[RMDB]
An RNA of 177 nucleotides, treated with 2A3 and read out base by base. The RNA was probed in 150 mM KOAc, 10 mM MgCl2 and 150 mM bicine (pH 8.5) at 24 C.
RNA sequence: GGGAACGACUCGAGUAGAGUCGAAAAUGAUAUAAUCUGCAUCCGACAACGAUCACCAACUUCCACCUUGAUCGAUUGGUCGCAUAAUCCAUUAAAUUUGGAAGUAGUCGCUCAUGCUUAGAAUUACCGUCACUAGCUCGUUCGCGAGCUAGUGACGAAAAGAAACAACAACAACAAC
Reactivity to 2A3 in 0.01 (KOAc 150mM, MgCl2 10mM, bicine 150mM(pH8.5), 24C), signal-to-noise 1, nucleotides 027 to 126: u090g020a000u020a060u110a170a180u160c090u040g000c000a000u030c000c000g010a000c010a100a020c020g110a000u090c010a000c100c000a070a110c010u010u030c000c000a010c050c000u000u040g000a050u000c040g130a110u010u010g000g010u020c000g050c050a070u110a060a040u000c010c000a000u010u010a000a050a240u000u060u010g000g000a000a000g000u010a000g020u030c060g020c000u010c030a010u010g080c000u030u000a020g070a140a060u060u070a090c000